Notes:
An RNA of 207 nucleotides, treated with 2A3 and DMS and read out base by base. 2A3 adducts were read by reverse transcription with SuperScript II with manganese. For DMS, 3,406 sequencing reads were counted. Source: RMDB library OK3TST, as collected in RNAgym. For 2A3, 2,451 sequencing reads were counted.
[RMDB]
RNA sequence: GGGAACGACUCGAGUAGAGUCGAAAAUAAGACCGGAUGGGAAAGCAUGCCGGCAGUCACGGUGUCUCGCUCGUUGCACAUAACCGAUUGCGAAGCCAGUAGUGCAGUUCGCAAGACGUACGGAAACCAUCCCGGGCAUGCGAAAGGAUGGACACUCCCAUACAUCAACCUUCGGGUUGAUGUAUGGAAAAGAAACAACAACAACAAC
Reactivity to 2A3 in 0.01 (KOAc 150mM, MgCl2 10mM, bicine 150mM(pH8.5), 24C), signal-to-noise 4, nucleotides 027 to 156: u090a010a010g030a040c010c030g020g020a060u070g030g000g120a080a140a070g050c030a030u070g070c040c000g040g010c020a020g040u080c060a020c080g020g000u020g030u040c020u010c070g030c020u030c020g080u080u110g050c070a040c010a120u200a090a040c020c050g080a070u020u050g030c040g000a020a030g020c050c030a060g100u160a030g010u150g080c010a030g170u030u020c000g010c000a000a010g050a040c050g040u110a030c020g040g020a070a020a020c020c000a030u060c000c000c010g000g040g000c030a020u070g000c000g030a080a040a070g030g020a030u070g020g000a020c020a010c070u030c000
Reactivity to DMS in 0.01 (KOAc 150mM, MgCl2 10mM, bicine 150mM(pH8.5), 24C), signal-to-noise 2, nucleotides 027 to 156: u000a050a100g000a080c000c020g020g020a100u000g010g000g020a050a090a100g000c030a050u000g030c010c090g040g040c090a120g000u000c030a120c000g000g070u000g030u000c020u010c030g010c030u000c030g020u000u000g020c030a060c080a250u010a090a100c000c030g040a300u010u000g040c060g020a110a130g000c040c020a180g020u010a100g030u000g040c020a090g010u000u000c040g000c000a080a020g020a100c100g000u000a150c050g010g030a160a120a170c010c010a060u000c020c000c000g000g040g050c010a030u000g000c000g000a150a090a100g020g000a050u000g010g010a120c060a120c130u010c030